[RMDB]
RNA sequence: GGGAACGACUCGAGUAGAGUCGAAAAGCUAGGGAGCGCACGAUGCCAGUGCCCUGACGUCUAGUCAGCGUCUCAACUAGUCUGAGUCAAUUAAAACGCUCACGGUGAAGUACGGGACUACCACACAGUCUUAUCACUAGUUCGCUGGUGGUAAGACAAAAGAAACAACAACAACAAC
Reactivity to 2A3 in 0.01 (KOAc 150mM, MgCl2 10mM, bicine 150mM(pH8.5), 24C), signal-to-noise 9, nucleotides 027 to 126: g000c010u020a020g010g010g020a020g010c030g000c000a010c020g050a030u080g020c010c020a010g000u010g020c000c000c000u000g020a010c010g020u030c030u030a010g010u010c010a000g010c000g030u000c000u000c010a020a030c010u030a010g030u000c040u010g010a000g030u040c010a010a040u100u130a060a040a010a020c050g000c000u010c000a020c020g000g000u020g030a060a010g020u040a020c010g010g000g020a000c000u030a030c000c020a040c000a010c000a030
Reactivity to DMS in 0.01 (KOAc 150mM, MgCl2 10mM, bicine 150mM(pH8.5), 24C), signal-to-noise 9, nucleotides 027 to 126: g010c030u000a050g000g000g000a150g010c080g000c070a080c080g000a100u020g000c040c040a070g000u000g000c000c040c010u000g000a060c050g000u010c060u010a070g010u000c050a150g000c060g000u010c020u000c080a090a070c020u010a070g010u020c050u010g000a040g010u020c080a090a110u030u030a060a080a120a100c220g000c030u000c010a060c050g000g000u000g000a090a100g000u000a060c090g000g000g000a040c030u000a090c050c030a060c130a070c190a100
Conditions: 150 mM KOAc, 10 mM MgCl2 and 150 mM bicine (pH 8.5), 24 C. An RNA of 177 nucleotides, treated with 2A3 and DMS and read out base by base. For DMS the reverse transcriptase was MarathonRT. For DMS, 64,102 sequencing reads were counted.